An RNA of 177 nucleotides, treated with 2A3 and DMS and read out base by base.
The data come from the RNA Mapping Database (RMDB), library OK2TRN.
Reactivities are given for positions 27 through 126.
For 2A3, 10,796 sequencing reads were counted.
RNA sequence: GGGAACGACUCGAGUAGAGUCGAAAACAAAAGUCGCAUUCAAGAAAUGAUAGAAUUUGUCUCUAUCGACAAACUGCAAAACAUCGUAAAAGAAGUUUUAGCGCAAGAAUCUAUUACAACCAAUCAAGGUCGAUCUCUGAUUCGUCGGGGGUCGGCCAAAAGAAACAACAACAACAAC
Reactivity to 2A3 in 0.01 (KOAc 150mM, MgCl2 10mM, bicine 150mM(pH8.5), 24C), signal-to-noise 6, nucleotides 027 to 126: c010a010a120a020a020g130u100c040g000c070a050u110u080c050a090a060g070a120a160a050u130g010a010u020a030g020a030a090u050u050u100g100u000c020u000c020u100a120u110c020g000a010c000a010a070a010c030u070g000c010a000a000a010a040c000a010u010c010g030u070a070a040a020a040g020a040a020g000u000u020u020u070a050g000c020g000c030a040a020g030a070a060u020c030u050a050u070u090a080c050a100a080c040c030a030a070u040c060a150a050
Reactivity to DMS in 0.01 (KOAc 150mM, MgCl2 10mM, bicine 150mM(pH8.5), 24C), signal-to-noise 8, nucleotides 027 to 126: c050a090a080a100a080g010u000c070g020c100a070u010u000c060a120a110g000a080a110a080u010g000a020u000a030g010a040a160u000u000u000g000u000c040u000c120u010a090u010c110g000a040c050a020a050a090c180u000g010c020a030a010a020a020c020a060u000c010g000u000a080a080a130a130g010a030a080g010u000u000u000u000a110g040c060g010c150a060a070g010a080a060u000c020u010a020u010u010a040c090a060a080c050c080a080a080u010c150a090a130